The data come from the RNA Mapping Database (RMDB), library OK2TRN. Structure probing data (2A3 and DMS) for a 177-nucleotide construct. High DMS reactivity at an A or C suggests that its Watson-Crick edge is free.

RNA sequence: GGGAACGACUCGAGUAGAGUCGAAAACGAUGCGCUCGGCCUUCGAACUCUGGGCGUCAUCCAGGACGCGAACUGUGUGACUGCGCAGGAGUUGUACGACUUGCCUUUGAACGACAAGGCGGUCCUGCCUGUCCCUUCUCUUCGGAGAAGGGACAGGAAAAGAAACAACAACAACAAC
Reactivity to 2A3 in 0.01 (KOAc 150mM, MgCl2 10mM, bicine 150mM(pH8.5), 24C), signal-to-noise 1, nucleotides 027 to 126: c030g000a010u100g020c070g030c030u000c040g080g020c000c010u100u060c010g040a040a010c020u000c020u030g000g070g050c010g030u020c000a000u020c020c000a050g030g030a090c060g020c030g130a130a050c010u010g000u000g010u030g080a070c040u180g020c060g000c070a000g030g090a080g000u130u220g110u210a030c030g010a040c000u050u300g030c040c020u070u060u180g180a160a070c090g110a000c100a010a010g000g000c000g010g000u000c000c030u050g050
Reactivity to DMS in 0.01 (KOAc 150mM, MgCl2 10mM, bicine 150mM(pH8.5), 24C), signal-to-noise 1, nucleotides 027 to 126: c090g020a100u000g030c060g010c010u000c030g000g010c150c030u000u000c150g020a080a080c110u000c010u010g010g000g030c000g000u000c050a020u020c080c050a000g020g000a120c050g010c050g020a020a070c020u000g010u000g010u000g020a080c050u010g050c030g030c030a070g010g010a120g040u000u000g020u000a190c120g000a030c030u010u010g000c010c010u000u050u040g010a160a150c130g020a040c110a020a010g000g000c000g010g000u000c010c010u000g010
Annotation:
For DMS the reverse transcriptase was MarathonRT. For 2A3 the reverse transcriptase was SuperScript II with manganese. For 2A3, 975 sequencing reads were counted.